Record summary: Conditions: 150 mM KOAc, 10 mM MgCl2 and 150 mM bicine (pH 8.5), 24 C. The record gives the reactivity of an RNA of 177 nucleotides to 2A3 and DMS. Reactivities are given for positions 27 through 126.
[RMDB]
RNA sequence: GGGAACGACUCGAGUAGAGUCGAAAAGACCGCCACGGCAACCUGCUGCUGGCCGACGAAAUCUUCACACCGGACUCGUCGCGGUACUGGCCUGCCGACGACUACCGGGCCGGCGUGGUCCAGACCAUCAAGUACAGUCUUUCGAGACUGUACUUGAAAAAGAAACAACAACAACAAC
Reactivity to 2A3 in 0.01 (KOAc 150mM, MgCl2 10mM, bicine 150mM(pH8.5), 24C), signal-to-noise 4, nucleotides 027 to 126: g020a020c000c040g020c030c020a030c020g000g040c010a100a240c060c140u120g020c010u020g000c030u010g040g000c020c010g030a020c040g020a020a090a100u060c040u150u080c060a060c030a050c130c030g040g080a110c020u000c040g010u010c010g020c030g030g000u090a190c050u050g070g000c010c000u000g000c020c020g100a210c020g040a060c040u100a130c050c050g040g020g000c030c000g000g000c020g030u060g000g000u030c010c020a010g030a040c020c000a070
Reactivity to DMS in 0.01 (KOAc 150mM, MgCl2 10mM, bicine 150mM(pH8.5), 24C), signal-to-noise 4, nucleotides 027 to 126: g000a150c110c050g010c020c040a060c040g000g010c020a100a110c200c120u000g000c030u000g000c210u000g010g020c030c040g020a060c060g030a040a120a160u000c040u010u000c080a070c150a130c050c050g020g000a080c100u000c080g000u000c030g020c080g000g010u000a060c030u000g010g000c020c050u000g000c030c010g000a060c020g020a100c050u000a050c140c140g000g010g020c010c010g000g010c020g010u000g000g000u000c010c020a110g000a120c030c040a160